[RMDB]
Record summary:
An RNA of 207 nucleotides, treated with 2A3 and DMS and read out base by base. The RNA was probed in 150 mM KOAc, 10 mM MgCl2 and 150 mM bicine (pH 8.5) at 24 C. For 2A3 the reverse transcriptase was SuperScript II with manganese. Reactivities are given for positions 27 through 156.

RNA sequence: GGGAACGACUCGAGUAGAGUCGAAAAGGUGAAAGCGAAUCGGGGUAGAUAAGCUAGCAGCAAAAAGGAACCGAUUCCCACCAAGUUCGGAAAGAGAUACCGGGCGAGGCGCUGAAGAAAGAAUCUCAAACUCCCGCAAGUUUCGACUUGCGGGAAAGAACCAGUAUAGUUUCGACUAUACUGGUUCAAAAGAAACAACAACAACAAC
Reactivity to 2A3 in 0.01 (KOAc 150mM, MgCl2 10mM, bicine 150mM(pH8.5), 24C), signal-to-noise 3, nucleotides 027 to 156: g070g010u050g060a210a020a010g040c050g000a000a010u020c010g000g020g010g020u090a090g080a190u100a110a050g020c040u090a040g050c070a000g010c020a050a060a030a020a140g090g020a070a000c030c020g000a010u010u000c030c010c000a010c010c010a050a030g010u020u030c010g010g040a160a120a060g020a040g000a010u020a070c030c010g010g000g000c030g000a030g030g020c040g000c060u080g030a040a030g060a060a110a020g060a040a060u020c020u010c050a090a080a060c070u010c010c000c000g010c000a000a000g010u040u150u200c090g050a030c010u000u000g000c000g000g000g000a010a000a000
Reactivity to DMS in 0.01 (KOAc 150mM, MgCl2 10mM, bicine 150mM(pH8.5), 24C), signal-to-noise 1, nucleotides 027 to 156: g000g030u000g000a070a090a070g010c080g050a030a030u000c020g010g000g020g030u000a170g030a210u010a050a150g050c020u000a110g070c080a150g050c060a020a040a050a200a090g050g000a140a130c060c050g000a100u000u000c020c020c020a060c010c020a040a270g000u000u010c020g010g000a060a030a160g000a160g020a170u000a110c020c040g020g010g000c010g000a140g020g080c070g000c080u000g000a050a060g000a070a070a040g000a100a110u000c030u000c010a050a100a130c100u000c000c010c000g000c020a050a030g010u000u000u010c250g030a050c020u010u010g000c000g010g020g010a000a000a020